[RMDB]
An RNA of 207 nucleotides, treated with 2A3 and read out base by base.
Reactivities are given for positions 27 through 156.
The RNA was probed in 150 mM KOAc, 10 mM MgCl2 and 150 mM bicine (pH 8.5) at 24 C.
For 2A3 the reverse transcriptase was SuperScript II with manganese.
The 2A3 profile rests on 1,099 reads.
The data come from the RNA Mapping Database (RMDB), library M2RFPK.

RNA sequence: GGGAACGACUCGAGUAGAGUCGAAAAACGGUCGUACGCGACCGAGGCGCGGCUAGGUCGACGGAACGAACAAUGGCAUCCCGCAUUCUGCCAUCCGCCGCGCAGCUUCUUCUCAAACGGUGCGGAAAAAAGUAGGACACCUUCGGGUGUCCUACAAGCGAUCAAUCUAGUUCGCUAGAUUGAUCGCAAAAGAAACAACAACAACAAC
Reactivity to 2A3 in 0.01 (KOAc 150mM, MgCl2 10mM, bicine 150mM(pH8.5), 24C), signal-to-noise 1, nucleotides 027 to 156: a000c040g000g000u010c000g040u060a060c200g000c010g080a000c000c000g010a040g000g010c020g000c000g000g000c040u060a160g010g140u020c050g040a130c160g090g090a080a010c020g040a030a010c080a010a010u040g000g040c000a010u080c020c010c020g000c000a020u300u090c010u040g030c000c000a010u010c030c090g000c010c000g030c000g000c000a010g000c040u160u120c000u040u000c020u010c010a010a030a070c040g000g000u000g000c000g000g000a030a030a020a000a020a020g010u000a000g000g000a000c000a000c000c050u020u090c160g000g000g000u000g000u000c000c000u000a000c000a010a000